This 207-nucleotide RNA was probed chemically with 2A3 and DMS.
DMS adducts were read by reverse transcription with MarathonRT.
For 2A3 the reverse transcriptase was SuperScript II with manganese.
It was measured as part of the RMDB library M2RFPK.
RNA sequence: GGGAACGACUCGAGUAGAGUCGAAAAGAAACGCAAGGCCGCUGACCGACGGGAUAUUGUGGGGCUUACCACAGGGGACGCGGCGUUAUCACUUGCCUUCUAAGCCGACCGUCUGGGCUGCAUACAAACCACCCAACUAUCUUCGGAUAGUUGGGAACUGCUAUCAUCUGUUCGCAGAUGAUAGCAGAAAAGAAACAACAACAACAAC
Reactivity to 2A3 in 0.01 (KOAc 150mM, MgCl2 10mM, bicine 150mM(pH8.5), 24C), signal-to-noise 2, nucleotides 027 to 156: g010a010a030a000c090g000c020a010a030g130g000c000c000g030c010u020g080a050c010c050g050a050c050g010g050g050a140u130a110u220u120g010u020g000g000g000g130c080u130u140a040c000c000a010c000a030g010g000g000g020a000c030g000c000g040g000c000g010u030u020a030u050c010a000c050u020u010g000c020c020u070u000c010u130a050a040g000c000c010g100a130c030c000g020u000c020u130g020g010g000c000u010g000c020a040u070a140c070a000a100a060c020c070a040c000c020c010a010a000c000u000a000u000c020u020u010c090g050g000a000u000a000g000u000u000g000g000g010a000a000
Reactivity to DMS in 0.01 (KOAc 150mM, MgCl2 10mM, bicine 150mM(pH8.5), 24C), signal-to-noise 1, nucleotides 027 to 156: g010a100a080a080c070g000c010a040a110g030g000c030c000g000c020u000g010a170c010c040g000a290c060g030g000g010a100u010a060u010u010g010u020g030g010g040g060c170u000u010a040c030c020a040c020a130g040g000g010g000a270c130g000c010g010g030c080g000u000u000a110u010c040a290c010u000u000g000c030c020u010u000c080u000a030a070g020c000c020g000a090c050c000g040u000c070u010g000g020g020c030u000g010c030a070u000a180c140a030a020a110c020c000a080c010c000c000a010a000c010u010a000u000c010u000u010c300g040g030a000u000a010g000u010u000g010g000g000a000a030